An RNA of 207 nucleotides, treated with 2A3 and DMS and read out base by base. For DMS the reverse transcriptase was MarathonRT. The DMS profile rests on 4,932 reads. For 2A3 the reverse transcriptase was SuperScript II with manganese.

RNA sequence: GGGAACGACUCGAGUAGAGUCGAAAAAGUCGCCAUAAGAUCAUCUUGACAUUGCAUGAUCGAGAGGUGAGUGAAUCGGUGAAGGCGGGAGAGGGUUUUGCAUUUUUUCCUCUCUCUAACCUAGUGAUCCGCACCACCCAGGUGAUCACGCUAAGGAAUCCUUAGACCAAUUCGUUGGUCUAAGGAUAAAAGAAACAACAACAACAAC
Reactivity to 2A3 in 0.01 (KOAc 150mM, MgCl2 10mM, bicine 150mM(pH8.5), 24C), signal-to-noise 5, nucleotides 027 to 156: a000g090u040c020g020c010c010a090u090a170a040g020a020u010c010a010u010c040u080u130g070a090c060a260u120u170g070c050a010u030g010a020u020c030g000a020g010a050g040g010u010g030a110g010u020g030a090a100u120c030g020g000u010g020a030a000g020g020c020g000g010g000a000g000a000g000g010g010u000u020u070u080g060c020a060u010u010u010u010u080u070c000c000u000c000u000c000u000c000u000a000a010c000c000u060a090g290u010g060a010u040c010c010g000c000a010c000c000a000c000c010c000a010g030g000u050g010a010u050c030a010c070g060c090u130a070a050g060g170a180
Reactivity to DMS in 0.01 (KOAc 150mM, MgCl2 10mM, bicine 150mM(pH8.5), 24C), signal-to-noise 2, nucleotides 027 to 156: a110g000u000c000g020c000c000a150u010a040a160g020a030u000c000a020u000c060u020u010g010a170c100a150u000u010g000c140a100u010g010a000u020c010g000a220g000a110g030g000u000g010a290g010u010g010a060a070u010c060g010g030u010g030a130a040g060g030c040g000g000g000a040g000a040g040g000g030u000u000u000u000g020c080a080u000u000u000u000u010u000c010c000u000c010u000c000u000c030u000a050a020c000c040u000a220g030u000g000a060u000c030c030g020c050a100c030c010a060c010c010c040a180g010g010u000g010a030u000c020a030c020g020c060u010a120a100g040g000a170
The reactions ran in a buffer of 150 mM KOAc, 10 mM MgCl2 and 150 mM bicine (pH 8.5), at 24 C.